[RMDB]
Structure probing data (2A3 and DMS) for a 207-nucleotide construct. The data come from the RNA Mapping Database (RMDB), library OK3TST. Conditions: 150 mM KOAc, 10 mM MgCl2 and 150 mM bicine (pH 8.5), 24 C. For 2A3 the reverse transcriptase was SuperScript II with manganese. DMS (dimethyl sulfate) methylates the pairing face of unpaired adenines and cytosines. For 2A3, 9,678 sequencing reads were counted. For DMS the reverse transcriptase was MarathonRT.
RNA sequence: GGGAACGACUCGAGUAGAGUCGAAAAGGCGAUUGAGAGGCCCUCUCAUUAAUGCGGAGCUGUCACGCUGACAGAAUGAUAUUAGAUGUCCGCUUCCGGUUACAUCGCGGCGAUGAUUACAUAGGACAUCGAUUACCCAUUGGCUUCGGGGAAGCAAGACUCAUGAUAAUUUCGAUUAUCAUGAGUCAAAAGAAACAACAACAACAAC
Reactivity to 2A3 in 0.01 (KOAc 150mM, MgCl2 10mM, bicine 150mM(pH8.5), 24C), signal-to-noise 6, nucleotides 027 to 156: g050g010c040g070a110u070u170g050a080g010a020g090g030c010c020c000u000c000u000c000a110u120u270a170a090u160g050c070g010g010a020g030c010u000g010u030c010a030c160g110c160u100g000a010c010a020g050a040a040u060g040a020u030a050u120u120a070g000a010u000g000u010c000c010g020c000u070u040c040c020g030g010u030u030a040c020a050u040c040g020c060g190g050c100g050a030u050g030a080u060u180a080c070a090u140a110g000g010a000c000a010u000c010g000a000u010u050a040c010c010c010a010u010u050g000g000c000u020u010c040g000g010g010g030a030a010g040c020a040a040
Reactivity to DMS in 0.01 (KOAc 150mM, MgCl2 10mM, bicine 150mM(pH8.5), 24C), signal-to-noise 5, nucleotides 027 to 156: g030g020c030g020a110u010u010g010a150g000a270g030g010c010c020c030u000c030u010c040a190u010u000a120a150u000g020c090g010g000a090g010c020u000g010u010c030a130c100g010c120u010g000a120c040a060g010a070a060u010g020a090u000a060u000u000a130g010a050u000g020u000c020c000g000c100u000u010c080c040g020g010u000u000a100c060a060u000c040g010c060g030g000c120g020a100u000g000a130u000u010a080c090a120u000a110g010g020a030c010a030u000c020g010a110u000u000a060c050c020c030a170u000u010g030g000c030u000u000c050g010g020g020g000a100a080g010c060a080a220